[RMDB]
RNA sequence: GGGAACGACUCGAGUAGAGUCGAAAAUGCCUGUGCUUUUCGACGUUUAGUUUAGUCUGCAAGAUAGAAUUGAUGUCUCGAAGACAGGUACAUCAGCUUUUAGAGUUCCUGUUCAAGAUCAGCAAACCUUGAAGACAUCCUUCGGGAUGUCUUCAAGAAAAGAAACAACAACAACAAC
Reactivity to DMS in 0.01 (KOAc 150mM, MgCl2 10mM, bicine 150mM(pH8.5), 24C), signal-to-noise 2, nucleotides 027 to 126: u020g030c000c030u010g020u010g000c000u000u000u000u010c180g020a010c010g000u030u000u030a030g010u020u000u000a170g010u000c000u000g050c230a100a080g000a020u000a220g010a030a050u000u000g030a020u010g000u000c030u000c040g000a030a040g000a040c080a030g000g010u030a040c150a150u000c010a050g000c110u000u030u060u040a120g010a120g020u000u000c050c000u010g000u020u030c090a110a130g010a090u030c030a030g010c090a040a050a110c140
Reactivity to 2A3 in 0.01 (KOAc 150mM, MgCl2 10mM, bicine 150mM(pH8.5), 24C), signal-to-noise 2, nucleotides 027 to 126: u160g000c010c000u010g000u190g130c030u030u100u010u000c070g010a010c000g070u000u000u060a030g010u000u010u070a090g040u030c030u080g140c140a120a060g000a080u070a040g060a060a040u000u050g000a000u020g080u000c000u040c050g020a020a020g000a000c000a000g020g000u020a000c020a120u120c000a000g040c000u060u070u080u250a170g010a000g070u020u000c020c020u010g000u000u050c020a040a030g010a230u000c040a000g000c010a000a040a060c000